[RMDB]
RNA sequence: GGGAACGACUCGAGUAGAGUCGAAAAUCUGGAAUAUGGCGGUUAUAGCACACUGUUAUGAGUUUCGUGACCUCAAAGUUGCGGCAUUUAAGGGGGAUGACUCUGUUGUGCUUUGCAGCGAUUACCGGGUUGAGAGAGUAUUCGUACUCUCUCAACCAAAAGAAACAACAACAACAAC
Reactivity to DMS in 0.01 (KOAc 150mM, MgCl2 10mM, bicine 150mM(pH8.5), 24C), signal-to-noise 3, nucleotides 027 to 126: u010c040u010g010g030a150a080u000a060u010g010g030c020g040g030u010u010a040u010a040g000c020a040c030a040c100u000g010u010u000a050u000g010a050g020u000u010u010c050g020u000g040a100c010c020u000c250a080a120a140g000u000u000g010c030g020g000c100a070u000u010u000a040a100g000g000g020g000g030a180u000g010a050c010u000c070u000g010u010u010g020u000g000c010u000u000u000g010c020a030g020c010g010a030u000u000a200c040c040g010
Reactivity to 2A3 in 0.01 (KOAc 150mM, MgCl2 10mM, bicine 150mM(pH8.5), 24C), signal-to-noise 1, nucleotides 027 to 126: u000c000u000g000g040a070a030u130a050u130g160g000c020g040g000u070u130a070u050a060g000c020a000c010a000c030u040g070u190u100a100u240g070a020g010u050u170u190c060g000u010g130a040c010c010u080c070a130a100a020g030u100u020g040c010g030g010c080a000u050u150u230a210a140g050g030g020g000g000a000u040g030a040c000u060c030u050g040u080u050g010u000g000c000u000u030u030g000c000a010g040c030g020a000u050u000a050c040c000g020
An RNA of 177 nucleotides, treated with DMS and 2A3 and read out base by base. 2A3 adducts were read by reverse transcription with SuperScript II with manganese. Conditions: 150 mM KOAc, 10 mM MgCl2 and 150 mM bicine (pH 8.5), 24 C. For DMS, 3,078 sequencing reads were counted. As a SHAPE reagent, 2A3 marks flexible, mostly unpaired nucleotides at the ribose 2'-OH. It was measured as part of the RMDB library OK2TRN.